The data come from the RNA Mapping Database (RMDB), library TTRDEL.
An RNA of 177 nucleotides, treated with DMS and 2A3 and read out base by base.
For 2A3, 1,762 sequencing reads were counted.
For DMS the reverse transcriptase was MarathonRT.
RNA sequence: GGGAACGACUCGAGUAGAGUCGAAAAGAUAUGGAAAUCUCGCAAGCUUACCUCUCGGAAACGAGAGGAAGUGAUGACCGAGGAUUUCCUAAGUCAAAACCUGAUAGGCCUUCGGGCCUAUCAGGAAGUUCCUUCCGUAGUUCGCUACGGAAGGAACAAAAGAAACAACAACAACAAC
Reactivity to DMS in 0.01 (KOAc 150mM, MgCl2 10mM, bicine 150mM(pH8.5), 24C), signal-to-noise 1, nucleotides 027 to 126: g000a020u000a100u020g000g000a030a000a000u000c000u000c010g000c010a070a110g010c000u000u000a060c000c000u000c000u000c000g010g010a040a020a060c000g000a010g000a020g030g000a020a010g010u000g010a100u010g000a130c300c000g020a000g000g000a040u000u000u000c000c000u000a010a120g000u000c000a090a090a190a200c010c000u000g000a000u000a010g000g000c000c000u000u020c190g030g010g000c000c000u000a010u000c000a000g000g000a000a040
Reactivity to 2A3 in 0.01 (KOAc 150mM, MgCl2 10mM, bicine 150mM(pH8.5), 24C), signal-to-noise 1, nucleotides 027 to 126: g030a000u020a030u070g000g030a030a000a030u000c010u010c020g020c030a170a100g000c060u000u060a300c000c000u030c000u000c000g030g020a080a030a010c000g010a020g010a000g000g000a010a010g010u010g050a300u070g000a020c000c030g030a050g100g170a010u020u000u000c000c000u010a040a000g040u000c020a050a080a110a220c000c000u000g000a000u000a010g000g000c030c040u010u180c300g070g000g000c000c000u020a000u010c000a000g020g000a000a000
The reactions ran in a buffer of 150 mM KOAc, 10 mM MgCl2 and 150 mM bicine (pH 8.5), at 24 C.